This 207-nucleotide RNA was probed chemically with 2A3.
Source: RMDB library OK3TST, as collected in RNAgym.
The 2A3 profile rests on 437 reads.
The RNA was probed in 150 mM KOAc, 10 mM MgCl2 and 150 mM bicine (pH 8.5) at 24 C.
[RMDB]
RNA sequence: GGGAACGACUCGAGUAGAGUCGAAAAAAGUUGGUUAAGGCUCUUACUACCGGAACCACUCCGUACGGUGUAGCUAUUCGAUCUCACUGGCAGACUGUGAACUCUAAAAACCAAAUGGUUUAUGAAGAAGGCGGCGCAAUCAACGUCAUGACCUCCGGUUACUGAGAAGCUUCGGCUUCUCAGUAACAAAAGAAACAACAACAACAAC
Reactivity to 2A3 in 0.01 (KOAc 150mM, MgCl2 10mM, bicine 150mM(pH8.5), 24C), signal-to-noise 1, nucleotides 027 to 156: a000a000g050u050u020g000g040u040u010a090a140g040g000c000u000c060u120u120a020c020u050a000c000c040g000g020a050a050c060c060a020c050u010c000c020g040u040a030c090g000g040u040g000u050a040g000c030u030a120u070u100c060g030a020u010c020u000c000a020c020u010g020g000c040a010g000a080c000u020g000u020g200a130a040c020u080c030u110a000a130a000a000a080c090c130a100a220a220u190g000g040u000u060u020a060u180g030a090a060g040a090a010g050g070c040g020g020c000g000c060a020a000u050c040a050a110c000g020u030c070a080u080g040a010c000c000u020c070c000g030